[RMDB]
RNA sequence: GGGAACGACUCGAGUAGAGUCGAAAAGAUCUGCGCCGAUCCGAAACGCUAGCAAACAGCCCGCAUCAUGUCGUCUCCUAACUUCGACGUGGUCAAAUACUGAGCUUAUGCGAGUAAGCCUGUUAGCAAUAGAUCAGAACGUUCGCGUUCUGAUCAAGAAGUCUUGAUAGUUCGCUAUCAAGACUUCAAAAGAAACAACAACAACAAC
Reactivity to 2A3 in 0.01 (KOAc 150mM, MgCl2 10mM, bicine 150mM(pH8.5), 24C), signal-to-noise 8, nucleotides 027 to 156: g020a050u010c010u070g030c040g020c020c030g030a050u040c030c030g070a090a050a030c060g010c050u050a010g030c050a060a040a120c020a060g030c010c030c020g030c040a020u020c000a010u020g000u010c010g030u010c040u080c080c090u120a130a170c060u080u050c020g010a010c010g010u010g000g020u040c010a030a020a040u180a110c050u040g020a020g030c010u010u040a010u090g060c040g010a040g060u020a020a000g010c010c030u050g020u060u040a020g010c020a080a130u070a200g010a000u010c000a000g000a000a000c010g020u060u050c190g000c000g130u000u000c020u000g000a000u000c000a000a000
Reactivity to DMS in 0.01 (KOAc 150mM, MgCl2 10mM, bicine 150mM(pH8.5), 24C), signal-to-noise 3, nucleotides 027 to 156: g000a080u000c020u000g030c040g040c000c020g030a070u010c020c010g000a110a080a090c080g020c030u010a050g010c030a070a060a120c050a300g000c010c010c010g030c040a070u000c040a090u000g000u000c020g030u000c040u000c070c050u000a130a060c070u000u000c010g030a060c020g070u020g000g000u000c040a060a080a150u000a120c090u010g010a150g000c050u000u000a070u020g000c120g020a160g040u000a030a100g010c000c060u000g040u000u000a100g030c060a050a130u000a120g000a020u010c000a020g000a030a010c010g010u010u010c300g040c030g040u000u000c000u000g010a000u000c000a010a060